[RMDB]
RNA sequence: GGGAACGACUCGAGUAGAGUCGAAAAAUUAAAACAAGAAAAAUGAAACUUGCAAUUAUAUACAAGGAGACAUAACUCCUAAUUCCUUCUUCCUACCUGAAGCAGAAGAAUUUUAAUUGCUUGGAAAUCAAGAAACUAUUUUCGAAUAGUUUCUUGAAAAAGAAACAACAACAACAAC
Reactivity to DMS in 0.01 (KOAc 150mM, MgCl2 10mM, bicine 150mM(pH8.5), 24C), signal-to-noise 3, nucleotides 027 to 126: a080u060u040a050a020a090a150c080a120a140g040a070a090a050a090a070u000g000a110a100a110c020u000u000g000c040a010a020u010u000a010u010a070u010a130c120a080a010g000g010a020g030a190c210a110u020a110a070c000u000c000c010u020a040a040u000u000c040c040u010u020c000u000u000c070c050u020a120c160c050u010g020a050a110g020c210a000g000a030a060g000a020a010u000u000u010u000a010a000u000u000g000c000u010u000g030g010a070a060a060
Reactivity to 2A3 in 0.01 (KOAc 150mM, MgCl2 10mM, bicine 150mM(pH8.5), 24C), signal-to-noise 4, nucleotides 027 to 126: a000u120u090a070a060a020a030c070a060a090g210a120a160a070a020a010u140g070a120a120a050c010u000u000g000c000a010a020u030u000a040u020a020u020a140c060a080a030g030g010a000g040a010c110a140u250a150a100c000u000c010c000u000a010a010u020u030c010c000u000u030c000u020u030c000c010u050a200c010c040u050g050a020a010g000c020a020g000a060a000g000a040a040u000u030u020u000a010a020u000u000g010c000u010u010g030g030a020a070a070
The data come from the RNA Mapping Database (RMDB), library RFM100.
An RNA of 177 nucleotides, treated with DMS and 2A3 and read out base by base.
For 2A3 the reverse transcriptase was SuperScript II with manganese.
Conditions: 150 mM KOAc, 10 mM MgCl2 and 150 mM bicine (pH 8.5), 24 C.
The DMS profile rests on 3,416 reads.